[RMDB]
RNA sequence: GGGAACGACUCGAGUAGAGUCGAAAAAUAUCCACGCUACGGCGUGGAUCACACGUUCAUCCCUAUUGGGACGGAAGUAGGCAUAGUGCCGAAGGAACGCAUUAGUCAUGCGCUACGGCGCAUGACACACAUCAGAGUCACUUCGGUGACUCUGAAAGGCUUUUAAGUUCUUCGGAACUUAAAAGCCAAAAGAAACAACAACAACAAC
Reactivity to 2A3 in 0.01 (KOAc 150mM, MgCl2 10mM, bicine 150mM(pH8.5), 24C), signal-to-noise 1, nucleotides 027 to 156: a000u110a000u000c000c000a000c000g000c010u040a040c300g080g000c000g000u000g000g000a000u000c000a040c000a030c000g010u020u020c000a010u010c000c010c030u190a300u140u300g040g000g000a020c000g050g010a000a000g010u090a010g000g000c030a040u140a250g110u160g170c000c020g000a020a010g030g070a020a000c020g010c060a060u030u030a000g000u000c000a000u000g020c000g020c000u040a020c270g050g020c000g000c010a000u040g000a000c000a000c000a010c000a020u080c000a000g010a000g000u000c000a000c000u100u080c210g080g000u000g000a010c000u000c000u020g000a000a000a000